[RMDB]
The record gives the reactivity of an RNA of 207 nucleotides to 2A3.
It was measured as part of the RMDB library OK3TST.
The 2A3 profile rests on 983 reads.
Values cover nucleotides 27 to 156.
RNA sequence: GGGAACGACUCGAGUAGAGUCGAAAAUACCAAUGCCUCCUCUGUGGCAGAGUGUGCCAGGGACUGUUAGAUUCAGUGUAGAGUGCUGUGAUCUGUGCCAGGCUCAGGCACGGAAACAGUUGGCAAAUGGCAGAGUCUGUAGUGCAGCACCCAAGUACAGCCCCAGCCACUUCGGUGGCUGGGGCUGAAAAGAAACAACAACAACAAC
Reactivity to 2A3 in 0.01 (KOAc 150mM, MgCl2 10mM, bicine 150mM(pH8.5), 24C), signal-to-noise 2, nucleotides 027 to 156: u100a010c010c000a020a080u090g040c000c000u020c020c000u010c040u000g050u010g000g060c020a000g020a010g060u120g010u040g000c040c020a030g020g000g020a040c000u010g020u030u070a010g000a040u100u050c040a080g050u060g040u140a010g050a020g090u100g020c000u010g020u060g050a220u000c010u050g000u010g040c030c020a130g140g050c070u100c110a020g000g000c000a010c000g000g010a040a090a000c000a010g010u040u080g070g000c030a020a030a130u100g060g000c000a000g000a000g010u010c000u050g060u090a120g080u080g180c000a000g000c020a060c010c000c000a090a010g000u020a030